[RMDB]
RNA sequence: GGGAACGACUCGAGUAGAGUCGAAAAGAUGGCCUCAUAGCCUCGCUCUAUCGGCCUGAGGCCGAUAAGGUAGCCGCCAUUGAGGGAGAGUUUAAGCUGAGGACAGAGCAAAGGAAGACCUUCGUGGCGUGCUCAUUACGUUCGCGUAAUGAGCACGAAAAGAAACAACAACAACAAC
Reactivity to DMS in 0.01 (KOAc 150mM, MgCl2 10mM, bicine 150mM(pH8.5), 24C), signal-to-noise 2, nucleotides 027 to 126: g000a160u010g000g040c000c000u030c040a040u030a130g020c000c000u000c030g000c000u000c090u000a060u000c060g010g010c000c030u050g000a190g030g000c020c020g000a000u020a010a120g000g020u000a060g020c110c030g000c000c000a070u030u000g010a080g020g000g010a070g000a200g010u000u000u010a070a110g050c080u000g010a060g000g000a170c100a100g000a040g010c050a030a120a010g010g000a130a060g000a100c010c000u000u000c040g060u000g010g000
Reactivity to 2A3 in 0.01 (KOAc 150mM, MgCl2 10mM, bicine 150mM(pH8.5), 24C), signal-to-noise 3, nucleotides 027 to 126: g140a070u050g030g000c010c000u050c020a060u150a060g000c000c000u030c030g100c080u010c000u050a130u050c030g000g010c060c100u170g030a150g000g020c030c000g000a020u010a010a040g030g090u030a000g040c020c010g000c060c000a030u030u200g000a000g000g130g000a030g000a000g020u020u190u300a180a100g000c070u070g050a090g060g000a090c020a080g080a020g100c010a060a080a000g040g060a030a050g110a100c000c000u000u050c080g030u090g040g010
This 177-nucleotide RNA was probed chemically with DMS and 2A3.
Values cover nucleotides 27 to 126.
For 2A3, 1,083 sequencing reads were counted.
The RNA was probed in 150 mM KOAc, 10 mM MgCl2 and 150 mM bicine (pH 8.5) at 24 C.
The data come from the RNA Mapping Database (RMDB), library OK1LIB.
2A3 adducts were read by reverse transcription with SuperScript II with manganese.